[RMDB]
RNA sequence: GGGAACGACUCGAGUAGAGUCGAAAAAGCUUAUGGAAAAAAUUUGGGAUCGUCUUUUAAAGGAGGAAUACGAAGGACUGCCUUGGCAUGGAAAAUGUGCACAAAUCAUGCGAUCAUCAAAACGUGCGGAUGUACUAUCUUUCGAGAUAGUACAUCCAAAAGAAACAACAACAACAAC
Reactivity to DMS in 0.01 (KOAc 150mM, MgCl2 10mM, bicine 150mM(pH8.5), 24C), signal-to-noise 2, nucleotides 027 to 126: a090g000c050u010u000a080u000g010g000a000a030a090a150a130a090u010u010u000g010g020g000a050u000c050g000u000c020u000u010u000u010a010a130a120g030g010a020g010g010a060a050u000a060c140g000a080a080g010g010a180c050u000g000c030c030u010u000g000g010c020a030u000g000g000a030a060a070a070u000g020u000g010c040a030c090a040a080a070u000c080a050u000g000c040g010a020u000c010a060u000c070a000a020a080a070c210g010u010g010c290
Reactivity to 2A3 in 0.01 (KOAc 150mM, MgCl2 10mM, bicine 150mM(pH8.5), 24C), signal-to-noise 2, nucleotides 027 to 126: a000g150c170u210u130a180u170g030g000a070a080a040a160a200a300u150u150u120g030g040g000a060u040c020g050u040c070u040u130u110u210a110a070a010g000g030a040g000g040a040a040u120a080c030g040a070a020g080g010a040c050u080g090c000c060u000u060g010g000c020a020u020g040g090a080a010a040a040u130g020u050g000c040a010c020a050a110a040u050c020a010u100g010c020g000a050u060c030a040u050c040a020a100a050a050c070g010u060g060c040